This 177-nucleotide RNA was probed chemically with 2A3 and DMS.
RNA sequence: GGGAACGACUCGAGUAGAGUCGAAAAGACUUGCGCUACCGUUGCUUUGCGUAGAGAAUUUCUCUCCAUAAUUAUUAUCUUUAGUUGUGGGGUUUGAAGGUUGGGUCUACCUUUCGGGGGGAUAAAUCCAUGAUAAGUAGUUCGCUACUUAUCAUGGAAAAGAAACAACAACAACAAC
Reactivity to 2A3 in 0.01 (KOAc 150mM, MgCl2 10mM, bicine 150mM(pH8.5), 24C), signal-to-noise 6, nucleotides 027 to 126: g020a020c030u030u070g000c020g000c030u040a060c040c020g110u070u130g030c050u110u090u060g020c030g030u070a050g020a010g050a240a110u010u090u010c040u010c000u000c020c000a010u010a060a020u070u070a030u060u110a160u140c110u140u170u040a020g010u020u010g010u010g000g020g010g030u060u070u180g060a040a030g040g030u060u060g050g000g000u000c020u060a240c000c000u010u050u070c090g010g020g010g000g000g000a010u040a060a120a020u020
Reactivity to DMS in 0.01 (KOAc 150mM, MgCl2 10mM, bicine 150mM(pH8.5), 24C), signal-to-noise 2, nucleotides 027 to 126: g000a080c050u010u000g000c040g020c020u020a110c060c070g020u000u000g020c110u000u000u000g020c090g010u000a100g010a090g030a160a110u000u010u000c010u000c020u020c020c010a020u000a010a030u000u000a050u010u030a110u040c090u020u010u010a030g010u000u000g010u000g010g020g010g010u010u000u000g020a040a050g000g000u000u000g010g010g000u000c050u000a090c060c070u010u010u010c080g010g020g000g010g000g010a140u010a040a070a150u010

Record summary
For 2A3 the reverse transcriptase was SuperScript II with manganese.